RNA sequence: GGGAACGACUCGAGUAGAGUCGAAAAGUGAUGUGUUCGCACAUCACGACCUAGGGCGCUUAGCUCAGUCUGGACAGAGUGCUUGGCUUCGGACCAAGUUGCCACGGGUUCAAAUCCUGUAGCGCCCACCAGAAUGACAGCGAUUUCGAUCGCUGAAAGGAGUACAAUGAUUCGUCAUUGUACUCCUAAAAGAAACAACAACAACAAC
Reactivity to DMS in 0.01 (KOAc 150mM, MgCl2 10mM, bicine 150mM(pH8.5), 24C), signal-to-noise 2, nucleotides 027 to 156: g000u000g020a030u010g030u000g000u000u000c300g000c000a010c020a010u010c010a010c000g000a100c050c030u000a090g010g010g010c030g000c030u000u000a110g020c030u000c020a090g030u010c030u000g010g020a060c030a100g000a100g020u010g020c000u000u000g010g030c010u000u010c240g000g010a090c000c020a010a070g020u000u000g020c030c030a110c050g010g020g020u020u010c080a040a090a050u000c050c030u000g000u000a050g010c010g000c010c000c010a070c070c030a080g000a140a150u010g000a220c010a010g010c010g020a030u000u010u000c280g010a030u000c010g030c000u000g010a020a120
Reactivity to 2A3 in 0.01 (KOAc 150mM, MgCl2 10mM, bicine 150mM(pH8.5), 24C), signal-to-noise 6, nucleotides 027 to 156: g000u010g000a000u010g040u020g020u050u160c240g020c090a000c000a000u010c000a000c000g020a010c010c010u160a180g010g000g000c010g000c020u040u070a040g020c010u020c060a020g020u000c040u060g020g050a210c020a040g010a010g050u070g000c000u010u010g000g000c010u150u150c260g100g010a120c010c000a020a000g010u010u090g020c030c000a020c010g010g000g000u020u030c010a010a020a020u010c000c000u010g010u010a010g000c000g040c140c000c000a020c000c000a020g130a190a060u150g070a070c010a000g000c000g000a000u050u070u140c190g080a030u000c000g010c000u010g010a040a000
The data come from the RNA Mapping Database (RMDB), library ARCHII. Structure probing data (DMS and 2A3) for a 207-nucleotide construct. Reactivities are given for positions 27 through 156. For 2A3, 6,129 sequencing reads were counted. The reactions ran in a buffer of 150 mM KOAc, 10 mM MgCl2 and 150 mM bicine (pH 8.5), at 24 C. DMS adducts were read by reverse transcription with MarathonRT.